Chemical mapping of a 177-nucleotide RNA with 2A3 and DMS. For 2A3 the reverse transcriptase was SuperScript II with manganese. It was measured as part of the RMDB library M2PK50. The RNA was probed in 150 mM KOAc, 10 mM MgCl2 and 150 mM bicine (pH 8.5) at 24 C.
[RMDB]
RNA sequence: GGGAACGACUCGAGUAGAGUCGAAAAGCUUUCCGUUUCGACGGAAAGCAAAGGCAAGUACAAGAGAGAUCAAAGAUCACUCAGAAAAGCCGUACUAAAGAAAAAUCAAUCUGUUCGCAGAUUGAAACACUUUAAUAGAUUUCGAUCUAUUAAAGUGAAAAGAAACAACAACAACAAC
Reactivity to 2A3 in 0.01 (KOAc 150mM, MgCl2 10mM, bicine 150mM(pH8.5), 24C), signal-to-noise 3, nucleotides 027 to 126: g010c000u000u000u000c000c000g000u000u030u100c190g100a020c000g000g000a000a000a000g000c000a010a020a030g010g000c030a030a020g100u070a070c030a180a030g010a000g000a000g010a040u030c070a270a300a000g030a010u020c010a040c040u010c010a020g070a040a090a030a010g010c020c050g020u030a020c050u110a050a150a080g080a030a140a020a010a040u020c000a000a000u000c000u020g020u050u050c260g010c020a000g000a000u000u010g000a010a020a010
Reactivity to DMS in 0.01 (KOAc 150mM, MgCl2 10mM, bicine 150mM(pH8.5), 24C), signal-to-noise 4, nucleotides 027 to 126: g000c000u000u000u000c000c010g020u010u000u010c150g050a060c000g010g010a020a000a000g020c000a020a060a050g000g020c020a060a040g000u000a070c060a140a170g010a020g020a050g020a000u010c000a140a190a200g000a040u010c010a050c000u010c000a240g000a040a090a180a200g000c000c010g020u010a130c060u000a020a060a140g000a030a070a100a110a130u000c010a000a000u000c000u010g010u000u010c150g030c000a010g000a010u000u000g000a020a080a140